[RMDB]
RNA sequence: GGGAACGACUCGAGUAGAGUCGAAAACAGGCGGUGGAUCAUACUACACAGUACAAGCAGGUGACUCAUUGUCAUUAAUCGCAUCAAAAUAUGGUACAACUUAUCAAAAAAUUAUGAGCUUAAAUGGGACCCAUGUGCAAUUCGUUGCACAUGGGUCAAAAGAAACAACAACAACAAC
Reactivity to 2A3 in 0.01 (KOAc 150mM, MgCl2 10mM, bicine 150mM(pH8.5), 24C), signal-to-noise 1, nucleotides 027 to 126: c120a050g110g080c060g000g000u020g020g000a000u110c000a070u090a260c000u070a090c000a000c030a050g180u130a060c000a040a000g000c000a000g150g140u140g040a000c000u000c000a060u070u070g150u040c000a000u000u200a000a130u000c000g000c040a000u040c190a120a020a020a020u090a000u060g000g000u000a000c140a020a130c000u040u000a000u170c110a020a230a000a000a000a000u150u000a240u060g000a000g010c000u000u170a150a070a020u300g080g080